[RMDB]
RNA sequence: GGGAACGACUCGAGUAGAGUCGAAAAUGAAAUCAAAAUUAGAGAAGUGAAGGCUGAGAUGGUAAUGGUAAUGAAGGUAGGAUAUUGUCACUGGUUUACGGUAACCACCACCACCAAAUUAAAAAAAGAAUUACUCUUACUUCGGUAAGAGUAAUUCAAAAGAAACAACAACAACAAC
Reactivity to DMS in 0.01 (KOAc 150mM, MgCl2 10mM, bicine 150mM(pH8.5), 24C), signal-to-noise 2, nucleotides 027 to 126: u010g020a090a050a080u000c060a040a040a090a090u000u010a110g010a100g010a070a040g010u000g010a080a060g000g010c070u000g010a070g000a070u000g010g000u000a040a070u000g000g010u000a010a050u010g010a080a060g010g030u000a070g010g000a070u000a050u000u000g020u020c070a060c090u010g000g010u000u000u000a060c060g020g000u000a050a040c020c060a020c080c020a070c050c010a050c050c030a020a070a070u020u010a010a000a000a120a040a050a100
Reactivity to 2A3 in 0.01 (KOAc 150mM, MgCl2 10mM, bicine 150mM(pH8.5), 24C), signal-to-noise 2, nucleotides 027 to 126: u050g010a020a030a030u140c080a100a050a050a110u160u160a080g020a010g010a180a010g080u060g050a030a020g030g010c030u030g010a020g010a100u020g000g040u050a060a000u050g040g000u020a050a050u070g030a010a030g030g040u030a020g070g090a030u050a080u150u070g080u060c030a010c100u030g000g050u000u020u100a040c050g020g000u000a010a020c000c010a000c000c010a010c000c030a030c010c030a020a030a130u260u230a040a170a010a010a010a000a000
Chemical mapping of a 177-nucleotide RNA with DMS and 2A3. DMS adducts were read by reverse transcription with MarathonRT. The reactions ran in a buffer of 150 mM KOAc, 10 mM MgCl2 and 150 mM bicine (pH 8.5), at 24 C.